[RMDB]
RNA sequence: GGGAACGACUCGAGUAGAGUCGAAAAUGACUCUGAUAGUAGCUAUCAUUCUGCUUGUGGCGCACUACAUGUACUUGAUCCCAGGCCUACAAGCGGCAGCAGCGCGUGCUGCCCAGAAAAGGACAGCGAACUAAAGCGGUUUCGACCGCUUUAGUUCAAAAGAAACAACAACAACAAC
Reactivity to DMS in 0.01 (KOAc 150mM, MgCl2 10mM, bicine 150mM(pH8.5), 24C), signal-to-noise 2, nucleotides 027 to 126: u040g010a100c020u010c050u000g000a090u020a050g030u020a040g030c070u030a120u010c030a110u010u030c030u000g020c010u060u010g030u010g000g030c060g020c030a070c070u000a090c110a120u000g010u020a100c030u000u020g000a180u000c020c030c000a100g000g010c000c020u000a040c060a060a030g000c080g000g050c080a020g000c010a020g000c210g000c140g000u000g020c020u000g010c000c000c030a070g020a040a070a080a090g000g020a050c100a040g000c220
Reactivity to 2A3 in 0.01 (KOAc 150mM, MgCl2 10mM, bicine 150mM(pH8.5), 24C), signal-to-noise 4, nucleotides 027 to 126: u120g050a050c000u030c020u050g030a040u030a100g260u060a050g100c060u040a040u100c020a090u120u120c040u130g090c050u020u040g040u050g020g000c040g000c080a040c080u080a020c020a090u170g030u110a070c060u090u110g030a030u030c030c020c000a010g000g040c000c010u060a070c060a120a020g000c000g030g000c000a020g000c000a010g050c020g070c080g190u070g000c010u010g020c000c000c000a060g110a010a150a010a000g080g000a010c020a030g060c030

Conditions: 150 mM KOAc, 10 mM MgCl2 and 150 mM bicine (pH 8.5), 24 C. The record gives the reactivity of an RNA of 177 nucleotides to DMS and 2A3. It was measured as part of the RMDB library OK1LIB. As a SHAPE reagent, 2A3 marks flexible, mostly unpaired nucleotides at the ribose 2'-OH. The DMS profile rests on 3,219 reads.